RNA sequence: GGGAACGACUCGAGUAGAGUCGAAAAGACAUGUUCGUCGGUGCGUACGUAUGGGCUGUUAAAGUACAUCUUUGAAACGGUGUCGACGAGCAGACACUGGCCGCUCUGCGUGUACCGCAGUUCGGGCGCCUGCACCUCGUUUUCGGCGCCUUCGCGCGAUAUUCAGCCGGUUCGCCGGCUGAAUAUCAAAAGAAACAACAACAACAAC
Reactivity to 2A3 in 0.01 (KOAc 150mM, MgCl2 10mM, bicine 150mM(pH8.5), 24C), signal-to-noise 1, nucleotides 027 to 156: g040a010c050a030u240g050u150u180c090g000u010c080g050g100u010g020c020g040u050a050c030g020u060a040u280g000g080g000c060u030g020u080u190a140a130a000g140u090a100c050a110u040c030u000u040u050g030a140a140a000c010g000g070u010g000u040c000g020a080c100g030a030g030c080a000g000a000c010a000c020u130g080g010c020c000g020c010u000c000u010g040c040g030u130g110u040a000c000c140g050c020a010g000u100u110c070g000g030g020c000g000c020c000u030g060c000a030c040c080u100c060g060u050u080u150u230c060g000g000c000g000c000c030u040u020c040g060c010g010c010